[RMDB]
RNA sequence: GGGAACGACUCGAGUAGAGUCGAAAAGAAAUCGACCGGUAGCAGGCGUCGCCGGGCUGGCAUCAUCGACGCGUGAUCAUCGACCUUCACGUACAGCGCUACGGCCCGUCAGGGCCCGCGCGGGUGCAUCGAUGAGCAGGUUCGCCUGCUCAUCGAUAAAAGAAACAACAACAACAAC
Reactivity to DMS in 0.01 (KOAc 150mM, MgCl2 10mM, bicine 150mM(pH8.5), 24C), signal-to-noise 2, nucleotides 027 to 126: g000a040a090a030u030c050g000a130c000c040g010g000u000a050g000c030a100g000g000c000g020u000c100g000c100c050g010g000g040c070u060g040g020c070a050u000c020a070u010c020g010a010c050g030c040g100u000g010a010u000c070a110u060c020g000a150c190c100u000u000c060a010c150g000u000a040c100a260g000c000g050c000u000a060c300g000g000c000c000c000g070u040c300a110g010g000g000c000c000c000g040c020g000c000g050g070g000u020g020c160
Reactivity to 2A3 in 0.01 (KOAc 150mM, MgCl2 10mM, bicine 150mM(pH8.5), 24C), signal-to-noise 2, nucleotides 027 to 126: g040a010a060a060u110c050g020a030c070c000g000g000u030a020g100c010a010g080g080c050g000u020c010g000c000c000g050g040g020c060u130g020g030c020a050u040c010a010u060c060g050a010c090g000c000g010u000g010a010u030c040a020u060c040g080a090c000c000u060u020c010a000c010g000u070a030c050a040g030c020g000c040u140a080c000g000g000c000c000c000g070u100c130a210g000g000g000c000c000c000g000c000g010c010g030g030g000u010g020c000